[RMDB]
RNA sequence: GGGAACGACUCGAGUAGAGUCGAAAAGGACCAGCUGAGGGGUCCGAAUUAACCUCAGCAUCUAGCCUGUCACCAAACAGGCGAAUUAUGUUGGUGUAAUGAGGCGAAAGCCUCUAUCUGACUGAGUCUUUGCAGUCUCGUUAACAAGGACAUUAGAAUCCGUAUAAUGGUUCGCCAUUAUACGGAUAAAAGAAACAACAACAACAAC
Reactivity to 2A3 in 0.01 (KOAc 150mM, MgCl2 10mM, bicine 150mM(pH8.5), 24C), signal-to-noise 1, nucleotides 027 to 156: g020g000a000c000c000a000g030c000u000g000a000g000g000g000g000u040c000c000g000a020a020u200u020a060a050c000c000u000c010a000g000c000a000u000c050u050a000g000c000c000u000g000u000c050a040c210c040a180a120a070c010a000g040g010c040g000a000a040u160u090a100u110g100u080u060g000g040u030g020u040a030a210u120g000a000g030g000c000g030a040a030a030g000c000c000u000c000u020a000u000c000u020g010a030c010u000g000a000g020u040c000u020u000u010g000c020a020g010u010c070u100c250g080u120u170a090a010c020a010a000g000g000a020c010a030u060u040a040g080a110
Reactivity to DMS in 0.01 (KOAc 150mM, MgCl2 10mM, bicine 150mM(pH8.5), 24C), signal-to-noise 2, nucleotides 027 to 156: g030g010a040c000c000a170g000c010u010g000a050g030g010g010g020u020c000c020g010a040a090u000u030a090a140c010c000u000c010a020g000c010a010u000c060u000a200g010c030c000u000g000u000c040a190c270c230a060a190a070c000a000g000g010c000g080a030a010u010u000a070u010g000u000u000g010g000u010g040u000a170a090u000g010a040g030g010c000g000a150a150a280g010c000c010u000c000u000a000u000c070u000g000a130c070u000g040a120g000u000c030u000u000u000g000c000a080g060u010c110u020c080g050u000u000a130a050c040a010a070g020g000a090c000a080u000u010a070g010a210